Chemical mapping of a 177-nucleotide RNA with DMS and 2A3. For DMS the reverse transcriptase was MarathonRT. For 2A3, 899 sequencing reads were counted. Conditions: 150 mM KOAc, 10 mM MgCl2 and 150 mM bicine (pH 8.5), 24 C.
[RMDB]
RNA sequence: GGGAACGACUCGAGUAGAGUCGAAAAGAAAAUUAGCAUUCGUCCUGUAACCAACCGGGCUUUUGACGAAUGCAUCGUUAACAAUCCAGGAGAGCCUGGAUGCCCGUAUCGCAGGUAAAGAAAGAAACCUGAUUUACCUCUUCGGAGGUAAAUCAGGAAAAGAAACAACAACAACAAC
Reactivity to DMS in 0.01 (KOAc 150mM, MgCl2 10mM, bicine 150mM(pH8.5), 24C), signal-to-noise 2, nucleotides 027 to 126: g010a060a110a090a170u010u090a170g020c070a000u000u000c010g010u020c000c140u050g000u040a060a140c010c060a130a170c300c130g020g020g020c150u000u000u000u020g000a010c010g040a070a080u010g010c090a060u000c120g020u010u010a050a060c190a140a030u000c030c030a000g000g000a300g010a300g000c000c000u050g000g030a050u020g000c030c000c000g000u000a190u000c140g060c100a010g000g000u000a020a000a180g000a090a000a030g040a020a130a050
Reactivity to 2A3 in 0.01 (KOAc 150mM, MgCl2 10mM, bicine 150mM(pH8.5), 24C), signal-to-noise 2, nucleotides 027 to 126: g090a000a110a000a100u300u150a000g000c000a000u020u000c000g070u000c030c050u080g070u120a070a040c080c000a180a100c020c180g000g010g000c030u020u040u120u170g010a000c000g000a020a050u100g040c000a010u050c000g000u000u030a050a050c050a300a000u000c000c000a000g040g020a300g040a000g140c010c000u000g000g000a000u000g000c000c000c050g010u050a030u200c040g030c000a000g000g050u060a000a000a290g080a070a110a000g060a020a010a020